[RMDB]
RNA sequence: GGGAACGACUCGAGUAGAGUCGAAAAGAUAUGGAUCCCAUUUGGCUUUUGACGAAGACAUGUUCGGAAACGAACAUGCUUCGAUAAGCCAGUGGGAUCCUAAGUCAAAGCAUCGUUCGCGAUGCAACGUAAAUUGCAGGUUCGCCUGCAAUUUACGAAAAGAAACAACAACAACAAC
Reactivity to 2A3 in 0.01 (KOAc 150mM, MgCl2 10mM, bicine 150mM(pH8.5), 24C), signal-to-noise 4, nucleotides 027 to 126: g060a020u070a040u160g000g010a020u040c060c020c080a000u300u210u090g000g000c000u120u120u120u240g300a160c060g000a020a030g070a120c010a010u010g010u000u000c000g020g030a050a060a090c010g000a000a000c000a010u000g020c000u000u010c000g000a000u010a020a000g010c000c000a000g000u010g010g030g000a000u000c000c000u000a020a000g030u000c040a090a000a090g000c010a000u000c010g120u150u190c300g000c020g130a000u000g000c010a000a000
Reactivity to DMS in 0.01 (KOAc 150mM, MgCl2 10mM, bicine 150mM(pH8.5), 24C), signal-to-noise 3, nucleotides 027 to 126: g000a020u000a300u000g000g020a010u000c000c000c000a030u010u000u010g010g010c000u000u000u020u010g030a260c170g020a010a020g010a200c010a010u000g000u010u000c000g030g000a150a080a230c000g030a020a000c000a000u000g000c000u000u000c000g000a120u000a010a030g010c000c000a010g010u000g000g010g000a000u000c000c000u000a000a090g000u000c080a130a140a160g010c010a010u010c000g010u000u020c280g040c010g010a010u000g000c020a050a050